[RMDB]
RNA sequence: GGGAACGACUCGAGUAGAGUCGAAAACAUGGAGUCUUCGGACUCCAUGCACUACCGAAAUAAUGCCUCGGUAUAAAAGGCAUACCCUUGGAAACAAGGGAACGAUGUCACGAUUCGUCGUGACAAAGUUCGAAAUGGUGUUCGCACCAUUUCGAACAAAAGAAACAACAACAACAAC
Reactivity to DMS in 0.01 (KOAc 150mM, MgCl2 10mM, bicine 150mM(pH8.5), 24C), signal-to-noise 2, nucleotides 027 to 126: c000a000u000g000g000a050g000u000c000u010u020c260g030g000a030c000u000c000c020a000u000g020c080a160c040u000a030c000c000g000a120a090a130u000a160a030u000g010c000c010u000c010g000g050u000a110u000a040a040a080a010g020g000c010a020u000a220c030c020c000u000u010g010g000a140a110a170c010a000a020g010g020g000a040a020c110g000a240u010g000u000c000a010c000g000a020u000u010c240g000u000c000g020u010g000a010c000a000a010a090
Reactivity to 2A3 in 0.01 (KOAc 150mM, MgCl2 10mM, bicine 150mM(pH8.5), 24C), signal-to-noise 2, nucleotides 027 to 126: c000a010u000g000g000a010g000u010c010u010u070c270g090g000a010c000u000c010c000a000u000g000c010a050c040u030a020c010c000g040a050a100a070u190a040a010u060g010c000c000u010c010g000g030u050a050u200a170a060a000a020g000g020c020a000u070a070c000c000c000u010u000g010g030a000a060a020c010a020a020g000g000g030a000a000c030g080a030u050g000u030c000a000c000g010a000u030u060c190g040u010c000g000u100g000a000c020a000a000a000

An RNA of 177 nucleotides, treated with DMS and 2A3 and read out base by base. For 2A3 the reverse transcriptase was SuperScript II with manganese. Reactivities are given for positions 27 through 126. It was measured as part of the RMDB library M2PK50. For DMS, 1,513 sequencing reads were counted.